The record gives the reactivity of an RNA of 170 nucleotides to DMS and 2A3. Values cover nucleotides 27 to 129. The RNA was probed in 150 mM KOAc, 10 mM MgCl2 and 150 mM bicine (pH 8.5) at 24 C.
RNA sequence: GGGAACGACUCGAGUAGAGUCGAAAACGUCGAGGGGGUUCACAUCCCCAACCCGCGGGCCGGCUACUCUUCUUUCCCUUCUCUCGUCUUCCUCGGUCAACCUUCGAAGUUCCUCUUCUUCCUCCCUACGCAGAGACGUUCGCGUCUCUGAAAAGAAACAACAACAACAAC
Reactivity to DMS in 0.01 (KOAc 150mM, MgCl2 10mM, bicine 150mM(pH8.5), 24C), signal-to-noise 9, nucleotides 027 to 129: c130g000u010c070g020a160g020g010g030g000g000u010u020c200a120c200a120u060c040c000c000c010a010a010c010c020c000g020c080g000g010g020c060c060g010g000c060u040a060c030u000c030u020u010c030u020u020u030c020c000c050u030u010c030u000c000u020c060g030u030c030u050u000c040c030u000c050g010g020u000c040a040a070c020c030u050u030c050g000a100a090g000u000u000c000c000u020c010u010u010c040u010u010c010c030u020c020c000c020u000a060c080g000
Reactivity to 2A3 in 0.01 (KOAc 150mM, MgCl2 10mM, bicine 150mM(pH8.5), 24C), signal-to-noise 9, nucleotides 027 to 129: c070g080u090c060g050a160g000g010g010g010g000u110u100c070a050c020a140u090c010c010c000c000a000a000c000c010c010g020c030g000g010g000c010c030g010g000c010u060a050c030u030c000u090u040c010u030u050u060c020c000c000u050u020c040u000c010u010c020g070u010c000u120u050c020c010u030c010g000g030u030c030a070a050c010c000u050u080c030g050a100a030g020u040u030c000c010u010c010u060u020c000u030u030c010c000u020c000c010c000u020a030c070g000